RNA sequence: GGGAACGACUCGAGUAGAGUCGAAAAGAUAUGGAAAUGUUUAGGGAGUCGACCAUCGGAAACGAUGGCACGACUUUGAUCUAACUGCAUUUCCUAAGUCAAACUUAAGGAGUUCGCUCCUUAAGAACUAAUACUUUUAGUUCGCUAAAAGUAUUAGAAAAGAAACAACAACAACAAC
Reactivity to DMS in 0.01 (KOAc 150mM, MgCl2 10mM, bicine 150mM(pH8.5), 24C), signal-to-noise 8, nucleotides 027 to 126: g000a020u000a130u010g000g000a010a020a020u000g010u010u000u000a010g010g000g000a010g030u000c000g010a300c000c000a000u000c000g010g000a050a030a070c000g010a010u000g000g010c030a030c010g020a010c000u000u010u000g000a050u010c000u000a020a060c300u010g020c100a040u000u000u000c000c000u010a020a130g000u000c010a110a150a290c010u000u000a010a010g000g000a020g030u000u020c300g010c000u000c000c000u000u000a000a010g010a100a260
Reactivity to 2A3 in 0.01 (KOAc 150mM, MgCl2 10mM, bicine 150mM(pH8.5), 24C), signal-to-noise 4, nucleotides 027 to 126: g010a010u040a010u090g000g030a010a010a000u040g030u030u130u130a030g020g000g010a040g010u000c000g010a030c010c000a010u000c010g000g010a040a030a010c010g010a000u020g020g000c130a200c110g000a000c000u130u080u040g010a010u000c000u010a000a030c060u140g020c040a020u010u010u000c000c000u000a020a010g010u000c060a080a060a210c020u000u010a010a010g010g020a010g020u070u210c290g080c100u010c000c000u000u010a000a000g000a010a000
Background: Chemical mapping of a 177-nucleotide RNA with DMS and 2A3. The reactions ran in a buffer of 150 mM KOAc, 10 mM MgCl2 and 150 mM bicine (pH 8.5), at 24 C. For 2A3 the reverse transcriptase was SuperScript II with manganese. For DMS, 16,170 sequencing reads were counted. Values are in units of 0.01, from 0 to 300, in steps of 10. Reactivities are given for positions 27 through 126. It was measured as part of the RMDB library TTRDES.